Record summary
An RNA of 207 nucleotides, treated with 2A3 and DMS and read out base by base. Source: RMDB library M2RFPK, as collected in RNAgym. The DMS profile rests on 1,488 reads. Conditions: 150 mM KOAc, 10 mM MgCl2 and 150 mM bicine (pH 8.5), 24 C. For 2A3, 1,532 sequencing reads were counted. Values cover nucleotides 27 to 156.

[RMDB]
RNA sequence: GGGAACGACUCGAGUAGAGUCGAAAAGCAAGAAAGAAAUGAGUUUUCUGCGACUGACGGAUUAUUGCAGAGCACUGCAAGGGAACAGAAAAACUCUUUUUCAGCCGACCGUCUGGGCACACCUGAAUCACGACCGGAAGCUUCGGCUUCCGGUCAACCUUACAUAUAUGUUCGCAUAUAUGUAAGGAAAAGAAACAACAACAACAAC
Reactivity to 2A3 in 0.01 (KOAc 150mM, MgCl2 10mM, bicine 150mM(pH8.5), 24C), signal-to-noise 3, nucleotides 027 to 156: g030c020a030a080g020a160a110a010g030a060a070a050u110g000a000g000u010u000u000u000c010u020g020c030g050a040c060u090g040a030c030g050g070a070u070u130a040u120u170g000c030a010g030a110g150c110a110c300u000g000c000a010a030g020g020g020a050a020c000a000g030a060a050a000a030a070c020u040c040u110u050u010u050u050c030a000g000c000c010g050a040c000c020g000u010c020u070g000g010g040c030a010c020a020c040c020u100g030a080a090u180c040a080c220g020a010c000c000g000g000a000a000g000c010u050u050c130g060g000c000u000u000c020c000g000g010u000c000a000a000
Reactivity to DMS in 0.01 (KOAc 150mM, MgCl2 10mM, bicine 150mM(pH8.5), 24C), signal-to-noise 1, nucleotides 027 to 156: g020c050a000a070g010a070a100a070g010a000a140a090u010g040a070g030u000u040u040u000c020u010g020c000g000a300c050u000g010a130c120g020g000a300u000u020a170u000u020g030c000a040g010a300g020c200a130c020u000g020c000a020a170g030g000g000a100a120c000a020g000a050a010a010a040a040c020u000c000u000u010u000u020u000c000a100g020c020c000g030a040c020c020g000u000c080u020g020g010g060c070a110c050a040c080c050u000g030a070a070u020c090a130c040g010a060c010c020g120g010a070a000g000c040u000u020c300g120g040c000u000u000c000c000g040g000u000c000a010a020